An RNA of 207 nucleotides, treated with DMS and 2A3 and read out base by base. For DMS the reverse transcriptase was MarathonRT. The 2A3 profile rests on 2,690 reads. The RNA was probed in 150 mM KOAc, 10 mM MgCl2 and 150 mM bicine (pH 8.5) at 24 C. Reactivities are given for positions 27 through 156.

RNA sequence: GGGAACGACUCGAGUAGAGUCGAAAAACGAACACUACGGCUUACGAGCCGUAGUGGUCGACGGUAGCUGGAUAAAACCGGGCCAUUGGCCAAACCCAGCCCAUCAACUGCAGCACCUGUCCCGCAAGUGAGGAACCUUGCUUCGGCAAGGUUCCAAGAAUUAGGAUACGUUCGCGUAUCCUAAUUCAAAAGAAACAACAACAACAAC
Reactivity to DMS in 0.01 (KOAc 150mM, MgCl2 10mM, bicine 150mM(pH8.5), 24C), signal-to-noise 1, nucleotides 027 to 156: a140c020g000a000a010c030a010c000u000a030c020g020g050c010u000u000a120c210g040a170g020c000c010g000u020a000g020u000g000g010u000c000g010a250c040g000g010u000a040g000c000u000g000g000a160u000a070a070a130a150c070c050g030g030g000c070c040a150u010u000g080g140c040c010a060a030a030c130c000c000a030g020c000c020c030a080u020c030a120a100c090u010g000c020a070g030c070a000c000c010u030g000u000c030c000c000g050c110a070a160g030u000g010a220g060g010a020a050c000c000u010u000g000c000u000u000c300g070g000c000a010a000g010g030u000u000c000c010a020a120
Reactivity to 2A3 in 0.01 (KOAc 150mM, MgCl2 10mM, bicine 150mM(pH8.5), 24C), signal-to-noise 3, nucleotides 027 to 156: a010c010g010a000a010c000a000c000u010a000c000g000g010c000u070u070a050c270g120a020g000c000c000g010u000a000g000u000g000g000u000c000g010a070c010g000g030u020a060g000c010u020g050g030a090u080a170a140a050a050c030c040g000g000g000c000c020a250u140u250g030g000c040c040a070a020a040c010c000c010a000g010c010c020c010a080u120c030a030a080c050u080g030c030a020g010c000a020c020c010u050g070u030c010c030c030g000c060a100a060g100u140g100a070g010g000a000a000c000c000u000u000g000c000u030u080c180g030g000c010a000a000g000g010u000u000c000c000a000a000